Chemical mapping of a 207-nucleotide RNA with 2A3 and DMS. The data come from the RNA Mapping Database (RMDB), library OK3TST. The RNA was probed in 150 mM KOAc, 10 mM MgCl2 and 150 mM bicine (pH 8.5) at 24 C. For DMS the reverse transcriptase was MarathonRT.
[RMDB]
RNA sequence: GGGAACGACUCGAGUAGAGUCGAAAAGAUUUAGAUGUGGUUUAUGAUAGACCUCCAACAGCUUUAUCUAUUGGUCAAUAUGAAGAAUCAGGUAAAUGGUAUGAUAAUCACGUGCAUACUUACGGAGAAUUUAGUGCAACUGUAGCACCUUCAAAAAACUCCAAUUAUCUUUCGAGAUAAUUGGAGUAAAAGAAACAACAACAACAAC
Reactivity to 2A3 in 0.01 (KOAc 150mM, MgCl2 10mM, bicine 150mM(pH8.5), 24C), signal-to-noise 5, nucleotides 027 to 156: g020a010u120u120u180a050g020a070u070g010u040g030g060u030u070u040a100u100g050a060u060a070g040a010c010c000u030c050c010a070a080c020a060g050c030u080u070u080a080u110c070u050a080u060u150g030g000u040c020a060a040u100a090u170g020a040a030g040a040a040u050c040a020g000g060u060a020a080a060u080g030g000u050a020u040g030a040u050a130a050u100c030a020c120g010u030g030c010a030u020a040c010u050u050a030c070g020g030a050g020a090a050u100u150u120a060g000u010g010c030a090a040c070u090g010u060a010g000c000a010c010c010u040u080c080a050a040a030a100a020
Reactivity to DMS in 0.01 (KOAc 150mM, MgCl2 10mM, bicine 150mM(pH8.5), 24C), signal-to-noise 3, nucleotides 027 to 156: g010a110u000u010u000a020g010a100u000g030u000g010g020u000u000u000a090u020g020a150u010a090g010a080c060c030u020c030c090a060a090c050a060g040c060u000u000u000a040u010c030u000a100u010u000g020g020u000c030a060a120u000a110u000g010a080a140g000a090a080u000c060a040g000g030u010a020a070a060u010g040g020u020a040u000g010a110u010a060a120u010c150a070c110g030u010g000c020a080u000a040c050u010u010a130c060g000g020a140g020a060a120u000u000u000a030g030u010g020c000a040a140c050u000g010u000a150g000c010a040c010c040u000u010c040a000a040a050a070a110